Source: RMDB library 15KREP, as collected in RNAgym. Structure probing data (DMS and 2A3) for a 177-nucleotide construct. For 2A3, 4,223 sequencing reads were counted. Conditions: 150 mM KOAc, 10 mM MgCl2 and 150 mM bicine (pH 8.5), 24 C.

RNA sequence: GGGAACGACUCGAGUAGAGUCGAAAAAGUUUGUAUGUUAACAAGCACGCUUUUCAUACACCAGCAUAUGAUGUGAGUGCAUUCCGUGAUCUGAAACCUUUACCAUUCUUUUAUUAUUCUACUACACCUCCUUUAAUGAGUUCGCUCAUUAAAGGAGAAAAGAAACAACAACAACAAC
Reactivity to DMS in 0.01 (KOAc 150mM, MgCl2 10mM, bicine 150mM(pH8.5), 24C), signal-to-noise 3, nucleotides 027 to 126: a100g000u010u000u000g010u000a080u010g000u000u000a100a080c070a100a130g000c020a060c080g020c050u000u010u000u000c040a060u000a040c030a060c050c050a060g010c100a130u000a050u000g010a040u010g000u000g000a090g000u000g000c050a110u000u000c090c050g020u000g010a040u010c020u010g010a060a070a100c050c060u000u010u010a110c080c030a060u000u000c040u000u010u010u000a090u010u000a110u020u000c020u010a060c080u000a090c150a070c190
Reactivity to 2A3 in 0.01 (KOAc 150mM, MgCl2 10mM, bicine 150mM(pH8.5), 24C), signal-to-noise 4, nucleotides 027 to 126: a000g050u070u080u040g070u040a100u070g060u030u080a050a030c020a050a040g030c010a010c020g020c000u090u110u030u040c030a010u030a050c040a020c060c030a000g040c030a040u040a030u140g050a010u070g070u020g080a020g020u060g000c010a040u050u020c030c020g020u030g030a030u010c010u030g030a040a040a040c010c000u040u070u030a060c030c000a030u040u050c020u020u100u040u010a090u110u010a090u030u100c020u040a130c020u020a050c010a050c040